[RMDB]
RNA sequence: GGGAACGACUCGAGUAGAGUCGAAAAAGCAUGUGUGUUAGCUUCGGAGUGGAAGAUUUUAUGGCAGUUUAUAACCUUAAUAUACUCAGGAGGUAAUAAAUUCACUAGGAUGUUGGGGCGGAGCUAGCGUCCACUAGAGAUUCGUCUCUAGUGGACGAAAAGAAACAACAACAACAAC
Reactivity to DMS in 0.01 (KOAc 150mM, MgCl2 10mM, bicine 150mM(pH8.5), 24C), signal-to-noise 1, nucleotides 027 to 126: a050g000c090a050u000g020u000g030u000g000u000u000a050g010c000u010u000c080g010g010a090g030u000g000g000a140a070g000a070u010u010u030u000a040u020g010g020c090a030g000u000u000u010a020u000a060a080c020c010u000u000a080a080u010a160u000a060c110u000c090a070g000g010a020g010g010u000a080a000u000a010a010a040u000u000c090a070c060u000a060g020g000a010u010g000u000u010g030g020g000g000c070g030g000a030g010c020u000a030g030